[RMDB]
RNA sequence: GGGAACGACUCGAGUAGAGUCGAAAAACGAGUCCGUACGCGGACUCGAAGGGCCCCAGAAGACCAAGGGGCCCAGACCUACCACUCAUUAGAUGCAUGGAAAUCACUAGGUGAUACGUCACCUAGAACACGCUUUUAAGCUUCGGCUUAAAAGCAAGCAUUUUAAUUAGUUCGCUAAUUAAAAUGCAAAAGAAACAACAACAACAAC
Reactivity to 2A3 in 0.01 (KOAc 150mM, MgCl2 10mM, bicine 150mM(pH8.5), 24C), signal-to-noise 5, nucleotides 027 to 156: a000c010g000a000g000u000c010c000g040u010a020c270g000c020g070g000a000c000u000c000g000a000a010g000g000g000c000c010c000c010a100g130a300a050g050a160c090c080a090a120g000g000g000g010c010c010c010a000g000a000c000c010u040a050c020c020a040c060u110c020a110u120u210a110g050a140u110g090c100a050u130g070g090a070a090a110u150c050a050c060u000a000g000g000u000g000a010u030a080c160g060u020c020a000c010c000u000a000g000a010a000c060a010c070g000c000u010u000u010u000a000a000g000c000u020u140c250g050g000c000u000u000a000a000a000a010g000c000a000a000
Reactivity to DMS in 0.01 (KOAc 150mM, MgCl2 10mM, bicine 150mM(pH8.5), 24C), signal-to-noise 1, nucleotides 027 to 156: a050c060g030a000g040u020c010c020g030u000a100c290g060c090g070g020a020c060u000c000g020a010a080g000g020g070c010c020c000c040a160g040a140a170g020a190c030c040a180a220g010g040g070g000c020c000c010a000g030a090c060c020u000a080c070c040a070c030u000c050a200u000u010a080g000a110u000g020c140a100u000g000g010a110a150a130u000c070a100c000u010a000g000g060u000g040a120u000a080c300g030u000c000a000c000c000u000a000g000a070a080c170a120c160g020c030u000u000u010u000a010a000g040c040u010u000c300g050g030c000u000u000a010a020a010a000g020c010a000a060
This 207-nucleotide RNA was probed chemically with 2A3 and DMS. Reactivities are given for positions 27 through 156. The reactions ran in a buffer of 150 mM KOAc, 10 mM MgCl2 and 150 mM bicine (pH 8.5), at 24 C. 2A3 adducts were read by reverse transcription with SuperScript II with manganese. For 2A3, 3,175 sequencing reads were counted. For DMS, 1,429 sequencing reads were counted.